RNA sequence: GGGAACGACUCGAGUAGAGUCGAAAAGAUAUGGACCAGACUACCCACCGAAUGGGAGCAAUGAUGAGCCCACGAUCGGAAACGAUCGUGGGCUUUGAGCUCUCCAUUCGAGGUCUGGUCCUAAGUCGGAUAUGAGUAUGUUCGCAUACUCAUAUCCAAAAGAAACAACAACAACAAC
Reactivity to DMS in 0.01 (KOAc 150mM, MgCl2 10mM, bicine 150mM(pH8.5), 24C), signal-to-noise 3, nucleotides 027 to 126: g020a170u030a130u010g000g000a030c020c020a010g020a050c020u000a080c000c020c040a300c140c000g010a010a000u000g000g000g030a010g000c000a130a150u010g010a190u000g000a020g000c000c000c000a040c000g010a000u000c020g020g010a090a080a210c000g000a020u020c000g040u000g020g000g000c000u000u000u000g000a190g000c010u010c000u030c000c010a000u000u000c000g000a050g000g000u000c010u010g000g000u000c000c000u000a000a060g020u010c190